[RMDB]
RNA sequence: GGGAACGACUCGAGUAGAGUCGAAAAGCCUCCCGAGAGGGGACGAGUGAGGCUUAUCCCGGGGAACCCGGCGAAUCGUCCCCACAUAGCAGCUCCCGGACCCCCUUCCAAAGAGACCGGGGGGGAGAAAGAUGCAGGUUCGCCUGCAUCAAAAGAAACAACAACAACAAC
Reactivity to DMS in 0.01 (KOAc 150mM, MgCl2 10mM, bicine 150mM(pH8.5), 24C), signal-to-noise 8, nucleotides 027 to 129: g020c000c000u000c000c050c040g040a100g020a080g020g020g010g020a040c010g000a110g020u020g010a000g000g000c020u030u030a080u000c020c010c040g040g050g010g030a170a110c050c050c000g020g050c080g030a020a070u020c000g030u020c010c010c020c030a070c090a040u040a080g010c060a060g010c000u040c040c020c030g010g000a270c030c000c010c010c010u090u000c170c100a100a100a080g050a080g020a090c110c070g020g010g000g020g010g010g000a070g000a100a140a110
Reactivity to 2A3 in 0.01 (KOAc 150mM, MgCl2 10mM, bicine 150mM(pH8.5), 24C), signal-to-noise 9, nucleotides 027 to 129: g010c000c000u030c010c010c000g070a070g040a050g020g000g010g000a010c010g000a030g030u200g020a020g000g000c000u030u050a090u090c000c000c010g000g010g010g030a070a060c020c010c010g030g020c040g050a020a030u030c010g010u000c000c000c020c000a000c010a000u050a000g020c030a000g010c010u020c000c010c000g070g070a200c030c010c010c000c000u120u070c050c020a140a170a040g160a020g020a050c040c040g000g000g000g000g000g000g000a060g050a020a090a010